[RMDB]
RNA sequence: GGGAACGACUCGAGUAGAGUCGAAAAGAUAUGGAGUUACGGGAGCCACACUAACGAAUUCGGAAACGAACUAUUAGUGUUGGCGACGAUCGUAACUCCUAAGUCAAAAUCCGUCUUCGGACGGAAAGUCAAGUAAGUGGUUCGCCACUUACUUGACAAAAGAAACAACAACAACAAC
Reactivity to DMS in 0.01 (KOAc 150mM, MgCl2 10mM, bicine 150mM(pH8.5), 24C), signal-to-noise 3, nucleotides 027 to 126: g000a030u000a300u000g000g000a040g010u000u000a000c000g000g000g000a060g010c000c000a040c000a000c000u000a000a020c120g000a030a230u000u000c010g000g010a110a030a200c000g000a020a040c080u010a240u000u000a000g030u000g010u010u010g020g010c000g000a010c250g010a030u000c010g000u000a000a000c000u000c000c000u000a000a080g010u010c020a100a120a120a140u000c000c010g010u000c000u000u000c180g020g000a020c000g010g010a000a040a050
Reactivity to 2A3 in 0.01 (KOAc 150mM, MgCl2 10mM, bicine 150mM(pH8.5), 24C), signal-to-noise 3, nucleotides 027 to 126: g030a000u090a050u140g000g010a000g020u010u010a010c000g000g010g000a010g000c010c010a000c010a000c000u010a030a020c080g250a210a300u060u020c000g000g050a060a090a080c010g000a010a020c030u070a080u070u000a000g010u030g120u290u190g030g000c020g020a010c000g010a020u030c000g000u000a010a000c000u000c000c000u000a030a000g000u000c000a010a020a000a190u010c000c010g020u020c000u050u080c270g160g000a020c020g000g030a060a020a000

The record gives the reactivity of an RNA of 177 nucleotides to DMS and 2A3.
For DMS the reverse transcriptase was MarathonRT.
The RNA was probed in 150 mM KOAc, 10 mM MgCl2 and 150 mM bicine (pH 8.5) at 24 C.